[RMDB]
RNA sequence: GGGAACGACUCGAGUAGAGUCGAAAACAGACUGUGUCUCUCUGUCACACAGACUGAGACACUCUCUGACUCACUGUCUGUGUCUGUCUCUGAGUGACAGUGAGAGUGACUGACAGAGAGUGUGACAUCUAAUACUACCAUUCGUGGUAGUAUUAGAAAAAGAAACAACAACAACAAC
Reactivity to 2A3 in 0.01 (KOAc 150mM, MgCl2 10mM, bicine 150mM(pH8.5), 24C), signal-to-noise 9, nucleotides 027 to 126: c010a000g050a030c010u030g010u010g030u080c010u030c010u010c070u170g110u200c030a010c000a000c000a060g040a050c020u040g040a020g060a060c000a010c000u000c000u000c000u010g070a080c000u020c010a000c010u030g040u080c020u040g230u060g110u110c020u030g110u050c020u010c080u230g200a130g140u110g020a010c000a010g010u010g020a010g000a000g020u100g070a080c130u080g030a030c010a010g010a000g000a010g010u010g010u030g040a020c010a060
Reactivity to DMS in 0.01 (KOAc 150mM, MgCl2 10mM, bicine 150mM(pH8.5), 24C), signal-to-noise 9, nucleotides 027 to 126: c020a030g010a080c030u000g010u000g010u000c040u000c080u010c090u010g000u000c100a060c060a120c050a040g000a090c060u000g000a120g000a060c010a010c010u000c020u000c010u000g010a210c030u000c010a010c020u000g000u000c010u000g020u010g010u010c020u000g000u000c030u000c110u000g010a150g020u010g000a020c000a010g010u000g000a020g000a120g010u000g010a080c160u010g010a180c010a010g000a030g010a030g010u000g010u000g010a100c160a130

Chemical mapping of a 177-nucleotide RNA with 2A3 and DMS. The 2A3 profile rests on 77,566 reads. For DMS, 92,838 sequencing reads were counted. 2A3 adducts were read by reverse transcription with SuperScript II with manganese. Source: RMDB library OK2TRN, as collected in RNAgym. The reactions ran in a buffer of 150 mM KOAc, 10 mM MgCl2 and 150 mM bicine (pH 8.5), at 24 C.